[RMDB]
Record summary
Structure probing data (2A3 and DMS) for a 207-nucleotide construct.
RNA sequence: GGGAACGACUCGAGUAGAGUCGAAAACCAUUCCUUAUACCUUGAGUAUUGCUGAAUUCAGUUUAGCGUGCAUGCUCUUGGCUAUUCUCAUAGUGAUUGUCAAAUUUCGAGUUACUUAUUCGUCAAUAAAACACUACCACGUUCGCGUGGUAGUGAACAUUAGUAUAUCGUUCGCGAUAUACUAAUGAAAAGAAACAACAACAACAAC
Reactivity to 2A3 in 0.01 (KOAc 150mM, MgCl2 10mM, bicine 150mM(pH8.5), 24C), signal-to-noise 9, nucleotides 027 to 156: c030c000a020u070u080c010c010u110u120a060u050a110c000c010u010u020g000a010g020u020a060u180u150g010c020u020g060a170a150u170u230c090a180g160u070u110u150a060g040c080g030u070g020c010a010u020g000c000u000c000u020u010g000g000c000u040a050u110u060c070u020c080a120u120a110g110u070g120a200u090u090g100u110c070a070a080a110u070u110u090c030g010a020g040u060u050a120c050u130u140a090u140u070c050g050u030c060a090a090u080a160a100a020a010c000a000c000u000a000c000c000a000c010g020u020u040c120g030c000g110u010g000g000u000a000g000u000g000a000a000
Reactivity to DMS in 0.01 (KOAc 150mM, MgCl2 10mM, bicine 150mM(pH8.5), 24C), signal-to-noise 4, nucleotides 027 to 156: c050c040a250u000u010c030c010u000u000a200u000a030c010c010u000u010g010a050g020u000a020u000u010g010c000u000g000a060a100u000u000c160a190g020u000u000u000a060g020c040g040u000g000c120a200u010g030c010u000c000u000u000g010g010c040u000a110u000u000c040u000c060a180u000a110g020u000g010a110u000u000g010u000c020a060a120a110u000u000u010c020g000a140g010u000u000a090c110u000u010a110u000u000c070g010u000c080a060a080u000a070a070a100a150c000a010c000u000a000c000c000a000c010g010u010u000c300g020c020g060u000g010g010u000a000g020u010g000a010a060

The DMS profile rests on 12,459 reads. It was measured as part of the RMDB library M2RFPK. The RNA was probed in 150 mM KOAc, 10 mM MgCl2 and 150 mM bicine (pH 8.5) at 24 C.